An RNA of 170 nucleotides, treated with 2A3 and DMS and read out base by base. The 2A3 profile rests on 3,586 reads. For 2A3 the reverse transcriptase was SuperScript II with manganese. High DMS reactivity at an A or C suggests that its Watson-Crick edge is free.
RNA sequence: GGGAACGACUCGAGUAGAGUCGAAAAUUCGAUUCGGAUCGGCUCAUCUCGACAAGAGGCGGCGGUCCUCAGUGCUCUUACUCUUUGUUUGUAAAGAGGAGACUGCUGGACUCGCCGCCCAAGUUCGCUAUCCGGCCGUUCGCGGCCGGAAAAAGAAACAACAACAACAAC
Reactivity to 2A3 in 0.01 (KOAc 150mM, MgCl2 10mM, bicine 150mM(pH8.5), 24C), signal-to-noise 3, nucleotides 027 to 129: u060u020c000g180a130u130u140c050g010g010a010u000c000g000g000c010u020c020a130u030c040u030c030g000a000c040a030a000g040a040g020g010c000g010g020c000g030g000u000c030c000u000c000a000g000u070g200c000u000c000u010u170a210c010u000c010u040u040u040g140u180u050u220g160u300a060a000a000g000a000g000g000a020g000a070c000u000g060c050u000g000g000a000c020u050c200g000c000c000g000c000c000c000a010a000g000u040u000c000g000c030u030a070
Reactivity to DMS in 0.01 (KOAc 150mM, MgCl2 10mM, bicine 150mM(pH8.5), 24C), signal-to-noise 3, nucleotides 027 to 129: u000u070c000g010a070u070u010c000g030g040a030u040c070g010g060c030u010c080a130u000c020u040c030g040a030c300a090a060g040a230g000g020c030g050g070c000g000g030u030c030c000u020c000a030g000u030g020c060u000c000u030u050a300c060u000c020u000u000u000g010u110u020u100g060u060a010a030a030g000a000g000g180a000g000a040c000u000g070c140u140g000g000a020c030u000c010g020c000c020g020c000c030c030a000a140g000u070u030c000g000c120u030a090